This 207-nucleotide RNA was probed chemically with DMS and 2A3. DMS adducts were read by reverse transcription with MarathonRT. For 2A3 the reverse transcriptase was SuperScript II with manganese. For 2A3, 2,104 sequencing reads were counted.
RNA sequence: GGGAACGACUCGAGUAGAGUCGAAAACGCUGGGGAACUACAACGCUAAGCUCGACGAUCUACUGAAGCGCGCACGGUAGGGAGAGCGAAGCGUUGCCCUGUGCUGAAGCGCGCACGGCAACCGAAAGGUGCGGGGUAAUAUCUUUCGAGAUAUUAAUAAACCUUAGAAUUUCGAUUCUAAGGUUUAAAAAGAAACAACAACAACAAC
Reactivity to DMS in 0.01 (KOAc 150mM, MgCl2 10mM, bicine 150mM(pH8.5), 24C), signal-to-noise 2, nucleotides 027 to 156: c080g050c010u000g040g010g040g010a200a160c050u000a130c020a000a030c010g030c010u000a040a300g020c020u000c010g010a110c170g000a060u000c010u000a000c020u000g020a000a030g000c000g060c000g030c010a300c010g020g010u000a020g020g000g000a060g020a050g040c000g010a180a040g010c040g040u000u000g000c000c020c010u000g020u000g020c000u000g010a080a080g040c020g020c000g020c010a300c020g020g050c000a150a100c030c030g000a090a130a140g050g030u000g020c030g010g020g000g020u000a020a040u000a010u000c010u000u000u000c160g000a080g000a050u010a030u000u000a110a270
Reactivity to 2A3 in 0.01 (KOAc 150mM, MgCl2 10mM, bicine 150mM(pH8.5), 24C), signal-to-noise 2, nucleotides 027 to 156: c040g010c080u100g000g010g010g010a120a070c100u140a010c300a000a000c000g030c000u010a040a000g000c000u020c000g230a250c000g000a050u000c000u000a000c010u030g050a240a060g030c000g000c000g030c020a010c010g000g020u000a000g000g010g000a010g000a000g020c000g010a020a000g020c000g000u000u000g010c000c000c010u090g020u020g000c020u020g010a130a040g020c000g000c020g010c000a000c000g000g000c010a020a040c020c020g050a080a000a010g030g000u050g030c060g010g070g020g010u030a030a030u030a020u030c010u010u100u100c080g030a020g040a050u060a040u180u210a040a100